This 177-nucleotide RNA was probed chemically with DMS. For DMS, 935 sequencing reads were counted. DMS (dimethyl sulfate) methylates the pairing face of unpaired adenines and cytosines.
[RMDB]
RNA sequence: GGGAACGACUCGAGUAGAGUCGAAAACAAGUAAAAUACAGAUGUGUUGUACUAAGUUCUGCAAGCCUUUGGCAAUUCCAGGAUAUGUUUACUUUCCCUUGAUAAGAGAGGAAUUGGAAGGUAAGAGGCCUACAUCCAAUUUCGAUUGGAUGUAGGCAAAAGAAACAACAACAACAAC
Reactivity to DMS in 0.01 (KOAc 150mM, MgCl2 10mM, bicine 150mM(pH8.5), 24C), signal-to-noise 1, nucleotides 027 to 126: c080a020a020g000u000a040a010a000a050u000a040c120a170g010a130u000g010u000g000u010u000g020u000a020c070u020a140a120g010u000u000c020u000g000c160a040a230g000c030c030u000u000u030g020g000c010a040a040u000u000c040c010a060g000g010a180u000a080u010g000u000u000u000a030c070u000u000u000c030c000c000u000u000g020a110u000a100a130g000a220g000a120g000g000a020a020u000u000g010g030a020a050g010g020u000a040a200g020a160g020